[RMDB]
This 207-nucleotide RNA was probed chemically with 2A3 and DMS. For DMS the reverse transcriptase was MarathonRT. Reactivities are given for positions 27 through 156. The RNA was probed in 150 mM KOAc, 10 mM MgCl2 and 150 mM bicine (pH 8.5) at 24 C. It was measured as part of the RMDB library OK3TST.
RNA sequence: GGGAACGACUCGAGUAGAGUCGAAAACACGUUUGAUGAUGAGGAAUGGAGAUGGAAUAGAGUGUUCGCCAAGGGUUGCGGCUUCACGGCCCUGAGUGAUUGGCGCUGGCCGCAGCGCUUAAGAAAGAGAUUAUCAAGUUGCCAAAUGGGCACGUCAACUCGAUAAUGGUUUCGACCAUUAUCGAGUAAAAGAAACAACAACAACAAC
Reactivity to 2A3 in 0.01 (KOAc 150mM, MgCl2 10mM, bicine 150mM(pH8.5), 24C), signal-to-noise 5, nucleotides 027 to 156: c080a010c070g020u060u090u090g080a100u040g000a020u020g020a020g030g020a060a060u110g040g020a100g010a070u070g020g030a070a020u030a080g030a050g050u080g020u070u050c070g010c040c040a030a030g060g030g010u030u010g010c030g030g010c030u110u150c070a050c110g060g020c010c000c020u050g040a100g060u100g060a170u040u150g010g000c070g000c060u030g020g010c010c010g020c010a000g000c090g030c000u050u050a060a000g060a050a070a000g010a000g000a040u030u040a040u160c090a080a030g060u120u070g070c010c000a040a140a170u120g020g010g000c030a020c050g060u060c040a010
Reactivity to DMS in 0.01 (KOAc 150mM, MgCl2 10mM, bicine 150mM(pH8.5), 24C), signal-to-noise 3, nucleotides 027 to 156: c060a100c070g020u010u000u030g020a090u000g000a060u010g000a110g010g000a140a070u000g000g020a080g030a100u010g010g010a100a110u000a080g000a120g010u000g000u010u000c060g050c040c030a060a080g020g020g020u000u000g010c000g010g020c040u000u000c060a080c050g010g000c000c020c010u000g010a130g030u010g020a150u000u000g010g020c030g050c020u000g010g000c090c110g020c030a030g010c010g030c000u000u000a040a090g000a070a070a120g010a140g010a100u000u000a110u000c080a050a200g030u010u010g020c020c030a030a070a110u020g010g010g050c040a050c070g020u010c040a090